[RMDB]
RNA sequence: GGGAACGACUCGAGUAGAGUCGAAAAAGGUGCCUUAAUAAGCUGGUUAAAUGCUGUGGGCAAACGAGCUCAGUUUUGCCAGCAGCCCUCUGAGAGACUGCGGAACACAUCACAGAGUUGUUCCAUUGAAGAGCAAGGAAGCUGGGGUAUUUAUCCACGCAUCAUACAUCUUCGGAUGUAUGAUGCGAAAAGAAACAACAACAACAAC
Reactivity to 2A3 in 0.01 (KOAc 150mM, MgCl2 10mM, bicine 150mM(pH8.5), 24C), signal-to-noise 1, nucleotides 027 to 156: a000g050g000u010g000c000c000u140u040a250a070u110a170a050g030c000u020g000g100u110u150a090a020a000u150g000c010u010g000u060g100g000g010c040a040a040a000c100g070a060g030c020u060c030a040g010u000u020u060u040g000c000c020a020g000c040a020g000c000c010c000u040c000u090g020a090g000a010g010a100c070u190g000c180g080g070a050a020c040a000c000a060u220c030a030c040a100g140a010g040u110u060g000u000u010c000c000a000u000u020g000a000a020g010a030g000c040a060a110g010g050a060a030g040c030u050g030g010g000g010u120a070u000u060u060a070u120c000c020a010
Structure probing data (2A3) for a 207-nucleotide construct. The RNA was probed in 150 mM KOAc, 10 mM MgCl2 and 150 mM bicine (pH 8.5) at 24 C. The 2A3 profile rests on 497 reads.